An RNA of 177 nucleotides, treated with DMS and 2A3 and read out base by base. For DMS the reverse transcriptase was MarathonRT. Values are in units of 0.01, from 0 to 300, in steps of 10. Reactivities are given for positions 27 through 126. Conditions: 150 mM KOAc, 10 mM MgCl2 and 150 mM bicine (pH 8.5), 24 C. The data come from the RNA Mapping Database (RMDB), library 15KREP.

[RMDB]
RNA sequence: GGGAACGACUCGAGUAGAGUCGAAAACCUCCAGAGUUCCUCUUCUUCUUCCUUGCUGAGGCUCUUUCCCCCUGCGGAGAGCUGCUUCUUCUUGUUCUCGAGGGCCUUCCUUCUUCGGUGAUCCUGCGAACUAAAUGCUGUUCGCAGCAUUUAGUUCAAAAGAAACAACAACAACAAC
Reactivity to DMS in 0.01 (KOAc 150mM, MgCl2 10mM, bicine 150mM(pH8.5), 24C), signal-to-noise 3, nucleotides 027 to 126: c030c000u000c070c080a100g010a120g010u010u000c010c020u000c040u000u000c030u000u000c020u000u000c030c030u000u000g020c070u000g010a120g020g010c030u000c010u000u000u000c010c030c020c150c090u010g000c110g030g010a080g010a050g020c070u000g010c060u010u000c030u010u000c030u000u020g010u000u000c020u010c040g020a110g020g000g000c030c010u000u000c030c010u000u000c020u010u000c050g010g010u000g010a090u010c040c010u000g020c190
Reactivity to 2A3 in 0.01 (KOAc 150mM, MgCl2 10mM, bicine 150mM(pH8.5), 24C), signal-to-noise 1, nucleotides 027 to 126: c010c010u060c020c030a040g010a020g100u010u040c000c000u020c000u040u030c010u060u010c000u030u030c040c000u040u070g050c020u050g030a030g000g040c010u000c010u020u050u040c000c000c010c000c030u050g020c050g020g020a010g010a010g020c020u050g000c000u040u040c000u040u010c000u030u090g060u060u010c030u000c020g020a050g020g040g000c020c010u040u020c010c000u080u020c040u050u050c020g000g030u060g020a030u030c000c010u030g040c040